Description: Structure probing data (2A3) for a 207-nucleotide construct. Values cover nucleotides 27 to 156. Source: RMDB library OK3TST, as collected in RNAgym. The 2A3 profile rests on 1,192 reads. The RNA was probed in 150 mM KOAc, 10 mM MgCl2 and 150 mM bicine (pH 8.5) at 24 C.

RNA sequence: GGGAACGACUCGAGUAGAGUCGAAAAGGCCAUCGUCUGCCUCGAUGGUGGUCAUGCUGACGAGCCCGCGCGGGAGGCAGGUCCAGACCUCGGCUCGGACGGGUCGGAGAGCGAGGACGAGGGCGCGCAGGCCGGAGCUGUCCAGGGUCCUGAGACGGAAUUACGAGACAUUCGUGUCUCGUAAUUCAAAAGAAACAACAACAACAAC
Reactivity to 2A3 in 0.01 (KOAc 150mM, MgCl2 10mM, bicine 150mM(pH8.5), 24C), signal-to-noise 1, nucleotides 027 to 156: g100g000c010c010a030u010c000g010u010c000u010g010c000c010u010c000g030a010u000g000g010u030g030g040u020c020a040u220g040c050u130g010a240c300g020a040g030c000c000c000g000c010g000c000g010g070g010a020g010g010c030a020g020g020u020c010c000a040g000a080c000c010u010c000g010g000c010u030c000g090g120a150c290g020g040g010u050c050g050g000a040g000a020g030c000g000a030g000g000a000c020g040a190g000g080g010c010g000c000g000c010a030g010g030c000c010g000g060a000g000c010u030g010u000c010c030a060g030g030g000u010c000c000u080g050a090g040a100c050g050